[RMDB]
RNA sequence: GGGAACGACUCGAGUAGAGUCGAAAAACUGACGGUACGCCGUCAGAACGGUAGAAAAGAUGGUUUGAAAACCACGCCUUCUACCUAUAUAGUAAAUAAAUAGGCGGAGCGGUCAUACGUGACCGCAAAAACAUAUUCAGCUUCGGCUGAAUAUGAACAUAUUAAUCCGGUUCGCCGGAUUAAUAUGAAAAGAAACAACAACAACAAC
Reactivity to 2A3 in 0.01 (KOAc 150mM, MgCl2 10mM, bicine 150mM(pH8.5), 24C), signal-to-noise 2, nucleotides 027 to 156: a000c000u000g000a000c010g000g010u050a040c230g060c040c000g020u000c000a000g000a040a010c030g010g000u010a010g010a010a000a000a010g060a280u030g000g100u040u100u240g130a150a150a000a000c000c010a000c000g000c000c000u000u010c000u000a000c000c000u020a030u010a010u020a100g060u040a010a070a160u050a060a090a040u140a030g010g000c010g010g010a020g020c010g010g000u000c010a020u030a110c170g110u030g000a000c000c000g000c000a000a030a000a000a000c000a000u000a000u000u000c000a000g000c000u030u110c150g110g000c000u020g000a010a000u000a000u000g000a000a010
Reactivity to DMS in 0.01 (KOAc 150mM, MgCl2 10mM, bicine 150mM(pH8.5), 24C), signal-to-noise 1, nucleotides 027 to 156: a140c000u000g020a040c020g000g030u000a080c230g050c010c000g000u000c010a030g000a050a050c170g030g040u000a000g000a030a000a000a070g000a120u000g010g020u000u000u080g020a200a210a190a120c000c000a020c050g000c020c000u010u000c010u040a000c020c000u000a070u000a150u000a110g010u000a110a060a080u000a080a080a170u000a030g010g020c010g020g020a260g000c010g000g000u010c000a100u000a100c160g030u000g000a090c000c000g020c000a000a010a060a050a050c000a020u000a000u000u010c000a020g010c020u000u010c300g130g000c010u000g000a010a000u000a000u000g040a090a160
This 207-nucleotide RNA was probed chemically with 2A3 and DMS. DMS adducts were read by reverse transcription with MarathonRT.